[RMDB]
RNA sequence: GGGAACGACUCGAGUAGAGUCGAAAAAUGCGCAACCGCACUGGCAAAGCGGAACGAACAGACCCAGUGAACAACCUAGGCAGCGGUGCGCCAGGCACUGGGCACCGUAGUAAGACUUGGCAACCAACGCAGGUGAUAUAUUCGUAUAUCACCUGCGAAAAGAAACAACAACAACAAC
Reactivity to DMS in 0.01 (KOAc 150mM, MgCl2 10mM, bicine 150mM(pH8.5), 24C), signal-to-noise 2, nucleotides 027 to 126: a070u010g000c100g010c020a130a130c030c020g050c020a050c090u000g030g020c050a080a080a090g000c040g020g000a120a120c090g010a050a070c120a090g000a180c060c000c000a130g030u010g000a080a090c090a090a120c060c050u000a080g000g000c030a110g010c000g020g000u000g020c070g010c010c020a010g020g030c080a100c030u000g000g040g000c010a020c020c020g020u020a110g000u000a060a060g000a160c030u010u000g020g010c050a120a060c000c080a070a210
Reactivity to 2A3 in 0.01 (KOAc 150mM, MgCl2 10mM, bicine 150mM(pH8.5), 24C), signal-to-noise 1, nucleotides 027 to 126: a040u150g020c030g000c010a020a080c010c010g020c020a010c090u040g050g000c030a030a030a100g000c000g110g000a040a000c020g010a070a030c010a110g040a300c030c000c000a040g040u040g090a070a020c020a110a030c100c030u080a070g030g000c030a000g010c040g070g060u060g000c010g110c000c020a000g130g060c080a030c140u010g010g000g000c020a000c000c000g000u010a030g020u020a130a000g050a040c050u090u120g000g060c020a030a000c030c020a000a090

An RNA of 177 nucleotides, treated with DMS and 2A3 and read out base by base.
Values cover nucleotides 27 to 126.
It was measured as part of the RMDB library OK2TRN.